Background
The record gives the reactivity of an RNA of 177 nucleotides to DMS. DMS adducts were read by reverse transcription with MarathonRT. It was measured as part of the RMDB library OK2TRN.

[RMDB]
RNA sequence: GGGAACGACUCGAGUAGAGUCGAAAAGCAGGUUGCGGGCUCAAACUGAAGGUUGAUUAUCGCCCCAUUGGGUUGUAUGCUGGUGUGGUGGUGGCCCCUGGCCUAGGGACGCUACCCGAUGUGGUGCCUGGGGAAGGUUAUUCGUAACCUUCCCCAGAAAAGAAACAACAACAACAAC
Reactivity to DMS in 0.01 (KOAc 150mM, MgCl2 10mM, bicine 150mM(pH8.5), 24C), signal-to-noise 2, nucleotides 027 to 126: g020c090a070g010g000u000u010g010c080g030g020g020c080u010c080a070a100a070c080u000g000a140a100g030g010u000u000g010a130u000u000a100u010c120g020c030c010c000c080a080u000u010g010g000g020u000u010g020u010a040u000g020c020u000g000g010u010g030u020g020g000u000g000g000u000g000g010c030c010c000c040u000g010g010c080c090u000a120g010g010g000a050c020g010c000u000a030c010c000c020g020a030u000g000u000g000g010u000g000c100